Source information
Chemical mapping of a 177-nucleotide RNA with 2A3 and DMS. The data come from the RNA Mapping Database (RMDB), library OK2TST. For DMS, 1,101 sequencing reads were counted.
[RMDB]
RNA sequence: GGGAACGACUCGAGUAGAGUCGAAAAAGGACUUUUAGUACAAUGUUAAAUAGGAUGAUACUAUACAUAGUAUAUAUCAAUAGGAUGAUGCAGGCAUACUAGUUUCAUUCCCAAACUUGGAGAUGAACGCAUACGAAAAGUUCGCUUUUCGUAUGCGAAAAGAAACAACAACAACAAC
Reactivity to 2A3 in 0.01 (KOAc 150mM, MgCl2 10mM, bicine 150mM(pH8.5), 24C), signal-to-noise 1, nucleotides 027 to 126: a000g040g000a040c000u020u130u110u090a020g000u040a000c010a040a010u050g050u070u130a130a180a060u050a060g000g100a030u040g000a010u020a000c000u030a060u000a150c050a100u090a090g000u000a050u010a020u020a000u060c010a060a120u070a160g120g020a040u050g000a020u110g060c000a020g030g000c030a020u020a040c020u040a020g010u040u030u090c040a050u050u020c020c000c000a060a050a000c060u090u100g060g050a110g060a080u120g020a030a000
Reactivity to DMS in 0.01 (KOAc 150mM, MgCl2 10mM, bicine 150mM(pH8.5), 24C), signal-to-noise 2, nucleotides 027 to 126: a100g000g000a060c030u000u000u020u020a070g010u000a030c040a080a120u010g010u010u020a040a130a040u000a050g000g000a190u000g000a040u010a040c090u000a010u000a090c020a090u000a100g000u010a010u000a030u000a040u000c000a050a080u000a150g010g020a010u010g020a110u020g020c050a050g020g020c200a050u000a010c050u000a020g020u000u010u000c040a140u000u000c030c000c010a060a130a050c190u000u000g000g010a050g000a050u000g000a080a060